RNA sequence: GGGAACGACUCGAGUAGAGUCGAAAAGACCAUGGACGAGGCCAAUGCACUGACCUGACCUUUAAUUAGUAAACAGGUUGGCUUAUCCUGUGCUGGUUACGCUACUUAAUGCUUUAUAAAUUGCAGCCCGACCAUUACGUUUCGACGUAAUGGUCGGAAAAGAAACAACAACAACAAC
Reactivity to 2A3 in 0.01 (KOAc 150mM, MgCl2 10mM, bicine 150mM(pH8.5), 24C), signal-to-noise 2, nucleotides 027 to 126: g040a000c030c010a040u130g030g010a040c050g040a070g060g010c040c030a050a090u180g040c020a020c090u040g030a030c000c000u020g040a040c000c000u150u050u080a140a090u240u050a070g060u100a030a060a070c000a030g000g000u070u000g000g050c040u000u120a120u160c030c040u030g000u010g020c020u000g060g000u030u020a010c040g040c030u030a040c020u140u230a040a040u080g010c030u090u130u030a300u080a140a170a130u100u130g060c020a020g030c000
Reactivity to DMS in 0.01 (KOAc 150mM, MgCl2 10mM, bicine 150mM(pH8.5), 24C), signal-to-noise 1, nucleotides 027 to 126: g000a140c020c070a090u000g000g020a040c040g020a080g000g020c050c070a050a060u030g020c070a050c040u010g000a040c050c000u000g030a070c260c040u000u000u020a070a170u000u010a010g010u000a060a040a160c060a000g000g000u000u010g010g000c110u000u010a080u000c030c000u000g000u000g010c070u000g000g000u000u010a070c100g020c060u000a050c080u000u010a060a090u010g000c020u000u050u000a200u000a050a090a090u000u000g000c050a060g010c110

Annotation
This 177-nucleotide RNA was probed chemically with 2A3 and DMS. For 2A3 the reverse transcriptase was SuperScript II with manganese. DMS adducts were read by reverse transcription with MarathonRT. The reactions ran in a buffer of 150 mM KOAc, 10 mM MgCl2 and 150 mM bicine (pH 8.5), at 24 C.